[RMDB]
RNA sequence: GGGAACGACUCGAGUAGAGUCGAAAAGCACUGGCGUUCGCGCCAGUGCAAAGAACGCGACGGCCACCGAAAUAAAACGGUGAAGAACGCGUCAAGCCGUAAAAACGUCGAACUUCGGUUCGACGAACACCCUUACAUAGUUCGCUAUGUAAGGGUGAAAAGAAACAACAACAACAAC
Reactivity to 2A3 in 0.01 (KOAc 150mM, MgCl2 10mM, bicine 150mM(pH8.5), 24C), signal-to-noise 4, nucleotides 027 to 126: g000c000a000c010u010g000g010c040g020u070u110c230g030c000g000c120c000a000g000u000g000c000a000a010a000g000a030a010c010g010c010g050a050c050g060g030c040c010a000c010c000g090a090a120a050u300a020a120a040a030c010g000g020u050g000a020a010g020a060a020c040g010c000g020u020c030a020a010g010c000c020g040u060a050a030a010a040a070c020g000u000c000g010a000a000c000u040u060c150g070g010u010u010c000g000a000c000g000a000a000
Reactivity to DMS in 0.01 (KOAc 150mM, MgCl2 10mM, bicine 150mM(pH8.5), 24C), signal-to-noise 4, nucleotides 027 to 126: g010c000a010c000u000g000g010c000g050u000u010c240g030c020g030c010c010a010g010u000g000c000a010a070a070g000a120a030c010g000c010g020a070c070g010g000c140c010a010c000c000g010a050a080a100u010a080a140a090a130c020g000g010u010g010a100a110g000a130a040c030g000c010g000u000c040a100a110g000c010c010g010u000a080a050a050a110a140c010g010u000c000g010a010a010c010u000u010c210g010g000u010u000c010g000a000c010g010a030a080